[RMDB]
RNA sequence: GGGAACGACUCGAGUAGAGUCGAAAAAGAUGCCAUGCCGACCCGAAGAGGAAAGAAGGACUCGGACGCGAACCCGUGAGUGGAACCUUGGUCUUUUAUUGGGGGGUACACUCGAGGAGUGGAAGGCGUUAUGAAAUAUGUUCGCAUAUUUCAUAACAAAAGAAACAACAACAACAAC
Reactivity to DMS in 0.01 (KOAc 150mM, MgCl2 10mM, bicine 150mM(pH8.5), 24C), signal-to-noise 7, nucleotides 027 to 126: a080g020a120u010g010c030c030a070u000g020c030c030g010a160c040c020c030g020a110a120g010a100g010g000a060a070a080g010a100a060g010g000a090c080u000c100g000g010a100c080g010c050g010a070a090c050c030c030g010u010g000a050g010u000g000g010a210a110c010c010u000u000g020g010u000c130u010u000u010u000a100u010u030g010g010g000g010g000g010u020a140c030a030c010u000c000g010a100g010g010a090g010u000g010g010a080a070g010g010c130
Reactivity to 2A3 in 0.01 (KOAc 150mM, MgCl2 10mM, bicine 150mM(pH8.5), 24C), signal-to-noise 6, nucleotides 027 to 126: a010g090a050u120g020c020c010a030u090g000c010c020g040a050c000c000c030g020a040a020g070a040g060g070a100a060a030g040a030a030g020g010a030c020u020c030g010g020a020c030g010c010g050a050a040c010c000c010g050u070g010a020g000u030g020g020a070a020c000c020u020u050g050g030u100c030u070u250u070u120a140u120u090g010g000g010g010g000g010u040a020c010a000c000u010c010g010a070g010g020a040g010u090g010g030a030a030g040g010c030
The data come from the RNA Mapping Database (RMDB), library 15KREP. The record gives the reactivity of an RNA of 177 nucleotides to DMS and 2A3. For 2A3, 8,901 sequencing reads were counted. The DMS profile rests on 8,500 reads. The reactions ran in a buffer of 150 mM KOAc, 10 mM MgCl2 and 150 mM bicine (pH 8.5), at 24 C. DMS adducts were read by reverse transcription with MarathonRT.